[RMDB]
RNA sequence: GGGAACGACUCGAGUAGAGUCGAAAAUGAGGCUGCCGUUGAUGGCGGCGGUGUUGAGGAGCGGGUCCUGUGCAACGCGAACCCAUGAACCUGGUCAGGUCCGGAAGGAAGCAGCCAUAAGUGGAUCAUCGCGUGUGCCGCAGGGUAGCCUGCUCUGGUUUACGUUGCUGUUCGCAGCAACGUAAACAAAAGAAACAACAACAACAAC
Reactivity to 2A3 in 0.01 (KOAc 150mM, MgCl2 10mM, bicine 150mM(pH8.5), 24C), signal-to-noise 1, nucleotides 027 to 156: u090g010a020g100g020c000u000g000c010c000g110u220u280g220a250u230g050g080c000g000g000c000g000g060u080g030u030u070g070a090g030g000a000g000c000g030g030g010u300c020c000u010g000u000g000c000a020a000c020g010c000g020a040a030c000c000c000a020u020g000a020a020c010c050u000g000g020u080c000a040g000g020u000c000c020g080g120a130a090g040g000a000a000g000c010a000g040c000c000a010u020a100a020g000u000g010g000a000u010c000a030u010c080g000c000g040u110g130u070g020c000c080g000c000a000g000g020g000u050a010g030c000c000u000g000c020u000c000u000g010
Chemical mapping of a 207-nucleotide RNA with 2A3.
Conditions: 150 mM KOAc, 10 mM MgCl2 and 150 mM bicine (pH 8.5), 24 C.
2A3 adducts were read by reverse transcription with SuperScript II with manganese.
Source: RMDB library ARCHII, as collected in RNAgym.